[RMDB]
RNA sequence: GGGAACGACUCGAGUAGAGUCGAAAAGACAUGACGAUGGGGUGGUAUCCCAUUGCCGAAGCGGCUCGCCGGGUGCUGCGUGGCGAAAUCGUCAAUUCCAUUGCCAUUGCCGGUGUUUUGGCCGUGCUCACAGGUAGUCUUUCGAGACUACCUGUGAAAAAGAAACAACAACAACAAC
Reactivity to 2A3 in 0.01 (KOAc 150mM, MgCl2 10mM, bicine 150mM(pH8.5), 24C), signal-to-noise 2, nucleotides 027 to 126: g030a000c050a090u090g030a010c010g030a000u050g020g010g020g050u110g070g140u190a100u090c010c000c000a030u030u050g000c000c010g030a170a020g000c010g000g030c010u020c030g040c030c000g050g040g050u060g030c020u020g030c030g090u060g000g000c010g020a050a060a030u090c050g050u010c000a010a040u110u000c020c000a020u040u140g010c030c000a070u050u160g090c010c000g000g000u000g020u030u120u040u070g060g000c000c030g050u120g050c000
Reactivity to DMS in 0.01 (KOAc 150mM, MgCl2 10mM, bicine 150mM(pH8.5), 24C), signal-to-noise 4, nucleotides 027 to 126: g000a110c140a130u000g020a020c030g020a020u000g010g000g010g000u000g000g010u010a130u010c000c010c010a130u010u010g010c020c010g000a160a220g010c000g020g010c010u000c100g010c020c050g000g010g010u020g020c060u000g000c040g010u010g010g010c030g020a050a180a060u000c030g020u010c040a070a100u000u010c000c020a150u010u010g000c030c020a080u000u000g030c010c020g000g000u000g000u000u020u010u000g010g020c020c100g020u000g010c120